[RMDB]
Record summary:
Chemical mapping of a 177-nucleotide RNA with 2A3 and DMS. For 2A3 the reverse transcriptase was SuperScript II with manganese. For DMS the reverse transcriptase was MarathonRT. It was measured as part of the RMDB library TTRDES.
RNA sequence: GGGAACGACUCGAGUAGAGUCGAAAAGAUAUGGAAUGAUACUAGACAUGCUAUGGCUCGGAAACGAGCCCGAUAGCAACAGCUAGGUCAUUCCUAAGUCAAAGGUCUAAGGUUCGCCUUAGACCAACUCACUAUAUCCCUUCGGGGAUAUAGUGAGAAAAGAAACAACAACAACAAC
Reactivity to 2A3 in 0.01 (KOAc 150mM, MgCl2 10mM, bicine 150mM(pH8.5), 24C), signal-to-noise 3, nucleotides 027 to 126: g000a010u020a020u070g010g010a010a010u010g010a020u220a300c020u000a010g060a100c150a270u210g000c000u000a010u040g000g000c000u010c000g000g010a030a030a010c010g010a010g000c000c000c000g110a030u010a000g020c020a110a110c080a160g050c000u000a000g000g030u010c000a000u000u000c010c000u010a020a010g020u000c050a110a120a140g000g000u010c000u010a020a000g060g020u020u150c300g240c030c000u000u000a000g000a000c000c000a000a000
Reactivity to DMS in 0.01 (KOAc 150mM, MgCl2 10mM, bicine 150mM(pH8.5), 24C), signal-to-noise 4, nucleotides 027 to 126: g000a040u010a190u010g000g010a030a020u000g000a030u010a100c010u000a000g000a110c110a130u010g030c000u000a000u000g020g000c000u000c010g020g000a020a010a110c010g000a040g010c050c060c300g020a060u000a000g020c000a080a070c200a190g000c010u000a000g000g000u000c000a010u000u000c000c000u000a010a070g000u000c050a050a150a180g010g010u000c000u000a000a010g000g030u000u020c300g040c020c000u000u020a000g000a000c010c000a010a030